Chemical mapping of a 207-nucleotide RNA with DMS and 2A3. The reactions ran in a buffer of 150 mM KOAc, 10 mM MgCl2 and 150 mM bicine (pH 8.5), at 24 C. 2A3 is a SHAPE reagent: it acylates the 2'-hydroxyl of flexible nucleotides of all four kinds. DMS adducts were read by reverse transcription with MarathonRT. It was measured as part of the RMDB library OK3TST.

[RMDB]
RNA sequence: GGGAACGACUCGAGUAGAGUCGAAAAUCACACUCUCGAGUGAUCGUGUUCACACACGUGAACGUGAGUACGUGAGAGUGUGAACUCUCACUCGAGAUCACACACGUACACGAGAGUGAGAUCUCACUCGAGUACUCACGAGAGUUCGAGAACACGAUCAGGAGCAUUAGUUCGCUAAUGCUCCUGAAAAAGAAACAACAACAACAAC
Reactivity to DMS in 0.01 (KOAc 150mM, MgCl2 10mM, bicine 150mM(pH8.5), 24C), signal-to-noise 3, nucleotides 027 to 156: u010c020a080c060a110c060u000c030u030c000g030a090g040u000g000a030u010c010g030u000g000u000u000c030a100c080a220c220a110c150g020u020g010a080a210c010g020u000g010a040g000u000a020c000g020u020g020a080g000a020g030u000g000u000g000a020a000c090u010c000u000c010a070c010u010c040g000a190g010a090u000c040a200c040a160c070a130c070g040u000a110c090a070c040g000a280g000a050g020u010g000a070g010a110u000c000u010c000a030c010u000c030g000a130g030u000a040c010u000c020a040c030g000a130g010a180g000u000u000c060g000a200g010a040a080c030a040c020g030a130
Reactivity to 2A3 in 0.01 (KOAc 150mM, MgCl2 10mM, bicine 150mM(pH8.5), 24C), signal-to-noise 5, nucleotides 027 to 156: u100c020a030c010a010c030u030c000u020c050g070a070g020u050g020a040u010c010g000u010g010u050u030c050a030c000a010c020a020c170g030u060g100a130a010c010g000u010g010a010g010u020a010c050g100u160g160a130g000a000g040u010g000u010g000a000a010c030u000c000u010c010a000c010u010c020g060a070g030a110u120c000a020c000a010c010a000c080g120u200a030c080a020c100g050a050g000a010g060u010g000a010g000a020u050c010u000c010a000c000u000c000g010a040g030u010a020c000u010c000a020c020g050a050g000a010g070u110u080c050g000a010g010a060a000c040a000c050g080a040